[RMDB]
RNA sequence: GGGAACGACUCGAGUAGAGUCGAAAAGAUAUGGAACACGUAACAACAUCGAUCGGUACGUAACAUCAGGUCGGAAACGACCUGUGGUACCGGGAGUUGGAUAAGUGUUCCUAAGUCAAAACGUGACUAAAUCAUGUUCGCAUGAUUUAGUCACGAACAUUAGCCUAGUGUUCGCACUAGGCUAAUGAAAAGAAACAACAACAACAAC
Reactivity to 2A3 in 0.01 (KOAc 150mM, MgCl2 10mM, bicine 150mM(pH8.5), 24C), signal-to-noise 7, nucleotides 027 to 156: g020a010u070a040u100g000g000a000a000c000a000c020g030u040a060a010c010a000a010c010a240u300c040g130a090u060c000g000g000u000a010c020g040u080a080a070c050a130u230c010a020g000g000u000c000g000g040a030a060a050c010g000a000c000c000u000g000u000g010g000u000a010c000c010g000g000g000a030g000u010u000g000g010a020u020a070a030g000u000g000u000u000c000c000u000a010a000g010u010c010a030a030a060a090c010g000u000g000a000c000u000a000a000a000u000c000a000u010g050u070u100c260g000c150a000u000g000a000u000u000u000a000g000u000c000a000c000g000a000a000
Reactivity to DMS in 0.01 (KOAc 150mM, MgCl2 10mM, bicine 150mM(pH8.5), 24C), signal-to-noise 3, nucleotides 027 to 156: g010a100u000a300u000g000g010a010a010c010a030c010g020u000a100a270c010a020a040c000a240u000c100g000a150u000c000g020g010u010a010c000g030u000a110a110c120a090u010c000a030g000g000u020c000g040g000a170a090a230c010g020a010c010c000u000g010u000g020g010u000a010c020c010g000g000g010a140g000u000u000g000g040a150u000a020a130g000u000g010u000u010c000c000u010a010a060g020u010c050a060a050a090a150c010g030u000g000a040c000u000a010a020a010u000c000a030u010g000u010u000c300g000c000a020u000g000a030u000u000u000a010g010u000c000a000c000g000a030a080